This 155-nucleotide RNA was probed chemically with 2A3 and DMS. DMS (dimethyl sulfate) methylates the pairing face of unpaired adenines and cytosines. The 2A3 profile rests on 926 reads. It was measured as part of the RMDB library P90LIB. 2A3 adducts were read by reverse transcription with SuperScript II with manganese.

[RMDB]
RNA sequence: GGGAACGACUCGAGUAGAGUCGAAAAUAGGGAGGUCAGGGUCAGGAGCCCCCCCCUGAACCCAGGAUAACCCUCAAAGUCGAAAUAACAAAAAGAAAAAGAAAAAGAAAAAGAAAAACGUACCUUCGGGUACGUAAAAGAAACAACAACAACAAC
Reactivity to 2A3 in 0.01 (KOAc 150mM, MgCl2 10mM, bicine 150mM(pH8.5), 24C), signal-to-noise 1, nucleotides 027 to 135: u200a020g030g010g000a100g040g030u030c040a000g000g000g000u010c000a020g030g040a090g030c000c000c000c000c000c000c000c000u020g020a120a080c000c000c030a020g000g020a080u050a090a130c000c010c010u000c040a090a080a010g040u060c010g020a020a090a060u150a040a050c110a040a040a000a020a050g200a070a110a080a010a010g140a060a110a000a050a010g130a040a080a030a010a000g110a030a060a000a000a010c000g000u000a010c000c010u020u050c140g060g000g000u010a000c010g000u010a070
Reactivity to DMS in 0.01 (KOAc 150mM, MgCl2 10mM, bicine 150mM(pH8.5), 24C), signal-to-noise 2, nucleotides 027 to 135: u000a020g000g000g000a070g000g050u000c020a070g000g030g020u020c010a020g010g010a180g010c030c000c010c020c040c110c010c000u000g000a050a070c000c000c010a120g000g010a040u000a080a100c020c000c000u010c090a040a060a060g010u030c080g000a050a050a050u020a070a070c140a060a030a050a050a070g020a070a060a010a070a070g010a050a020a050a060a050g010a030a060a030a060a090g010a050a050a070a090a050c000g020u000a000c000c010u000u020c180g000g000g000u000a020c000g000u000a020